[RMDB]
Notes
Conditions: 150 mM KOAc, 10 mM MgCl2 and 150 mM bicine (pH 8.5), 24 C. Chemical mapping of a 307-nucleotide RNA with DMS. The data come from the RNA Mapping Database (RMDB), library POS240.
RNA sequence: GGGAACGACUCGAGUAGAGUCGAAAAUGUGUGAGCUCCUGCCGGUUUCUUGGCUGUCAGUCAGUCCCAGAGUGGGGAGGAAGAUAUGGGUGACCCCCACCCCCCAUCUGUGAGCCAAGCCUCCCUUGUCCCUGGCCUUUGGACCCAGGCAAAGGCUUCUGAGCCCUGGGCAGGGGUGGUGGGUACCAGAGAAUGCUGCCUUCCCCCAAGCCUGCCCCUCUGCCUCAUUUUCCUGUAGCUCCUCUGGUUCUGUUUGCUCAUAAAAGACCUGUCUGUUCGCAGACAGGAAAAGAAACAACAACAACAAC
Reactivity to DMS in 0.01 (KOAc 150mM, MgCl2 10mM, bicine 150mM(pH8.5), 24C), signal-to-noise 1, nucleotides 027 to 266: u060g010u000g010u000g010a100g010c050u020c170c030u000g010c090c060g010g010u000u000u010c100u000u010g030g000c000u000g020u020c060a060g000u010c100a050g010u000c030c010c000a050g000a070g050u020g010g010g000g020a030g000g010a040a050g020a070u000a100u000g010g000g010u000g000a210c110c020c000c020c010a170c020c020c040c000c030c000a170u050c070u000g040u000g000a110g050c010c100a110a180g000c040c010u000c110c040c070u000u000g020u000c050c010c010u000g000g000c090c000u000u000u010g030g010a110c190c060c040a060g000g000c120a010a040a050g000g010c030u010u020c060u020g030a260g000c030c040c070u000g020g000g000c040a060g000g000g000g060u000g000g050u000g020g000g030u010a060c170c230a040g010a050g000a080a020u000g000c030u010g010c030c100u000u000c040c010c080c070c050a120a140g000c000c040u000g000c040c010c000c040u000c040u000g000c030c010u010c170a010u020u000u000u010c040c000u010g020u000a100g020c090u000c020c000u000c020u000g000g020u000u000c000u000g000u010u000u030g020c020u000c030a020u000a040a080a060a140g000a140